Chemical mapping of a 177-nucleotide RNA with DMS and 2A3.

RNA sequence: GGGAACGACUCGAGUAGAGUCGAAAACGAGCUUAAUAGGAAAAGCUGCAGUAUAAUUGCUUCUUCUUAUGGAUGUGAUGUCCUCUGUUCUCUAGUCACAGAAAGCGAGAGUCAAGAUUAUAAGUCACACCCUCCUUAUCUUCGGAUAAGGAGGGUGAAAAGAAACAACAACAACAAC
Reactivity to DMS in 0.01 (KOAc 150mM, MgCl2 10mM, bicine 150mM(pH8.5), 24C), signal-to-noise 2, nucleotides 027 to 126: c090g000a150g000c000u000u000a110a110u000a050g000g010a080a070a030a020g000c030u000g000c090a120g000u000a140u010a170a110u000u000g000c000u000u010c200u000u000c040u010u000a030u000g010g030a070u000g040u000g000a040u000g000u000c020c000u000c070u000g010u000u000c070u010c040u010a100g000u000c070a020c080a050g010a020a030a010g030c030g000a100g010a090g010u020c040a050a110g000a060u010u000a070u020a110a110g020u000c110a120
Reactivity to 2A3 in 0.01 (KOAc 150mM, MgCl2 10mM, bicine 150mM(pH8.5), 24C), signal-to-noise 1, nucleotides 027 to 126: c010g000a000g000c020u060u180a050a000u020a260g070g000a050a020a000a080g010c010u230g000c040a020g080u200a090u090a180a160u150u080g000c000u000u030c030u070u020c040u040u050a070u060g030g040a020u050g050u040g040a030u110g080u030c020c020u010c020u040g000u050u000c050u000c000u030a110g020u110c020a030c010a070g110a100a040a000g060c040g010a030g030a000g090u120c050a020a060g020a020u130u180a190u080a280a000g130u070c020a000
For DMS the reverse transcriptase was MarathonRT. High DMS reactivity at an A or C suggests that its Watson-Crick edge is free. It was measured as part of the RMDB library OK2TRN. Reactivities are given for positions 27 through 126.